[RMDB]
RNA sequence: GGGAACGACUCGAGUAGAGUCGAAAAGGUGUAGUCGGGGACCGUCACGAUCCCGAAGUCGGCACGGAGCUUCCUCGAGACGGACGGCGCGUGAACCUUCACCGCUGGGCCUGACGUCCACGCACGCAGCCCGGAAUGGAUUCGUCCAUUCCGGGCUAAAAGAAACAACAACAACAAC
Reactivity to DMS in 0.01 (KOAc 150mM, MgCl2 10mM, bicine 150mM(pH8.5), 24C), signal-to-noise 1, nucleotides 027 to 126: g000g060u030g030u000a040g020u010c010g040g010g020g000a140c040c030g030u000c050a140c010g000a030u020c020c110c060g040a030a080g000u000c080g030g010c110a080c090g010g060a140g010c030u000u000c030c000u000c000g000a040g020a080c050g000g000a300c020g010g000c000g000c150g000u010g000a090a170c250c210u010u000c010a010c010c050g000c080u000g000g030g030c010c010u000g010a100c060g000u020c110c010a060c210g000c100a040c100g020c140